[RMDB]
RNA sequence: GGGAACGACUCGAGUAGAGUCGAAAAUGCGGGGGAUUCGUCCCCCGCACAGACGCAAGCCUGUUGGGCGUGAUUUAUGCUUGUCAUAGUUACUCUGAGAUAGGGCAAAGACGUUCGCGUCUUUGCCGUUACUAAUCGUAUUCGUACGAUUAGUAACAAAAGAAACAACAACAACAAC
Reactivity to 2A3 in 0.01 (KOAc 150mM, MgCl2 10mM, bicine 150mM(pH8.5), 24C), signal-to-noise 4, nucleotides 027 to 126: u070g000c000g000g020g000g000g010a000u010u020c060g090u040c030c000c000c000c000g000c000a000c000a010g040a000c040g000c100a050a040g030c010c030u150g100u180u200g080g020g020c040g020u050g040a070u050u180u130a050u080g030c080u150u180g090u180c020a030u020a050g010u050u060a050c030u020c040u100g070a060g050a160u180a150g140g010g000c010a000a000a000g000a020c010g020u050u050c220g010c000g080u020c000u000u000u000g000c000c000
Reactivity to DMS in 0.01 (KOAc 150mM, MgCl2 10mM, bicine 150mM(pH8.5), 24C), signal-to-noise 8, nucleotides 027 to 126: u000g010c000g010g010g010g010g010a030u000u010c200g010u000c000c000c000c000c000g010c000a000c040a060g010a120c090g000c170a080a110g010c020c010u000g010u000u000g010g010g010c050g000u000g000a040u000u010u010a010u010g000c030u010u000g010u010c010a030u000a030g010u000u000a040c030u000c020u000g010a130g010a140u010a120g010g000g000c000a010a000a010g000a010c010g020u000u010c210g020c010g010u000c000u000u000u000g000c000c010